The data come from the RNA Mapping Database (RMDB), library M2PK90.
Chemical mapping of a 177-nucleotide RNA with DMS.

[RMDB]
RNA sequence: GGGAACGACUCGAGUAGAGUCGAAAAUUGUGGUCAAGACCUUGGCGUAGUAUCGAAGGUUGUCAAGGUUCCUAUUGACUUAACAAUGAUUGAGUUUAUGUUAUGGUGUAAGGAUGGACAGGGGAAAUCCUGUCGCUUGAUUCGUCAAGCGACAGGAAAAAGAAACAACAACAACAAC
Reactivity to DMS in 0.01 (KOAc 150mM, MgCl2 10mM, bicine 150mM(pH8.5), 24C), signal-to-noise 2, nucleotides 027 to 126: u000u000g040u000g030g010u000c000a010a030g020a070c010c000u000u000g020g000c000g020u010a110g040u000a150u010c150g040a080a120g000g020u010u000g010u000c010a040a010g000g010u000u000c120c160u000a170u000u010g000a020c010u000u000a090a010c000a030a010u010g020a180u010u040g000a100g010u000u010u000a030u000g010u000u000a080u000g000g020u000g010u010a060a070g000g020a040u000g000g010a040c050a020g010g000g000g000a070a080a120